RNA sequence: GGGAACGACUCGAGUAGAGUCGAAAAGAGUUCACGACAACAGGGGCAUCUCAUAUGUUCAAAAUAUCAGAUCAACGGACAGGCAAACCCCUUGACUGGACUCCUGUCAAAUCAGACGGUAAAACAUGGAGGUUGGACAUGAUUGGCUAAAAUAGCGCAGACUAUCAGAGUUCGCUCUGAUAGUCUGAAAAGAAACAACAACAACAAC
Reactivity to DMS in 0.01 (KOAc 150mM, MgCl2 10mM, bicine 150mM(pH8.5), 24C), signal-to-noise 3, nucleotides 027 to 156: g020a110g030u010u000c050a100c050g020a240c100a100a120c100a040g000g020g060g030c040a080u000c060u000c080a110u010a040u010g020u000u020c130a070a110a080a080u010a090u000c090a100g000a080u010c070a090a130c120g000g000a090c050a100g020g000c070a100a080a050c010c000c010c060u010u000g010a110c060u000g010g020a040c030u000c010c000u020g000u010c010a060a090a080u010c040a120g010a070c070g020g010u010a050a030a020a040c010a100u000g000g020a070g020g000u000u000g020g010a060c050a040u000g000a080u000u000g010g050c030u000a020a020a050a100u010a100g020c120g000
Reactivity to 2A3 in 0.01 (KOAc 150mM, MgCl2 10mM, bicine 150mM(pH8.5), 24C), signal-to-noise 5, nucleotides 027 to 156: g030a010g010u000u040c040a030c080g080a070c070a180a040c030a090g020g000g010g000c010a070u020c070u030c070a040u080a050u180g050u100u060c040a030a040a160a070u160a120u140c080a030g040a080u060c020a060a070c060g020g020a000c010a020g010g050c040a020a080a200c010c000c000c000u020u040g030a030c010u000g020g000a010c000u000c010c010u050g000u050c030a000a040a190u070c010a020g030a040c020g040g030u080a030a030a020a020c010a020u060g010g000a020g060g020u110u090g030g010a040c010a020u070g010a070u060u060g030g000c010u070a040a010a060a130u120a090g020c020g000

An RNA of 207 nucleotides, treated with DMS and 2A3 and read out base by base. Conditions: 150 mM KOAc, 10 mM MgCl2 and 150 mM bicine (pH 8.5), 24 C. For 2A3 the reverse transcriptase was SuperScript II with manganese. For DMS the reverse transcriptase was MarathonRT. The data come from the RNA Mapping Database (RMDB), library OK3TST.